RNA sequence: GGGAACGACUCGAGUAGAGUCGAAAACACAUGGAGGAGAUAUCCCACUUGAUAAUCUAUUUAUCUGGGCUCGAUUUCUGGCAGGGAGGCCAAAGAGAAAUUCUAACUUCAUUGUCUUCAGGGAGGGUUCGUAGCAUCCGUUCGCGGAUGCUACGAAAAAAGAAACAACAACAACAAC
Reactivity to DMS in 0.01 (KOAc 150mM, MgCl2 10mM, bicine 150mM(pH8.5), 24C), signal-to-noise 1, nucleotides 027 to 126: c030a090c100a060u000g000g030a010g000g010a140g000a120u000a070u020c020c000c000a160c150u000u010g000a000u000a020a060u060c210u030a010u030u000u000a000u000c000u000g000g000g000c100u020c020g020a230u020u030u050c070u010g000g000c170a090g000g000g000a060g020g000c170c030a050a100a140g000a030g000a070a010a050u020u000c030u000a050a130c010u000u000c020a050u000u000g000u000c050u020u060c060a060g000g000g010a070g000g000g000
Reactivity to 2A3 in 0.01 (KOAc 150mM, MgCl2 10mM, bicine 150mM(pH8.5), 24C), signal-to-noise 3, nucleotides 027 to 126: c040a000c000a010u030g050g000a030g100g000a080g030a030u110a080u080c010c010c000a030c030u020u110g030a020u010a090a020u030c130u160a200u090u110u030a010u030c020u030g030g000g010c000u000c030g070a050u030u050u060c040u050g020g000c010a030g070g000g100a060g100g000c000c020a030a080a000g180a000g040a010a080a040u220u080c030u070a050a140c000u020u050c030a070u030u160g070u040c050u110u050c090a090g000g010g000a030g020g020g000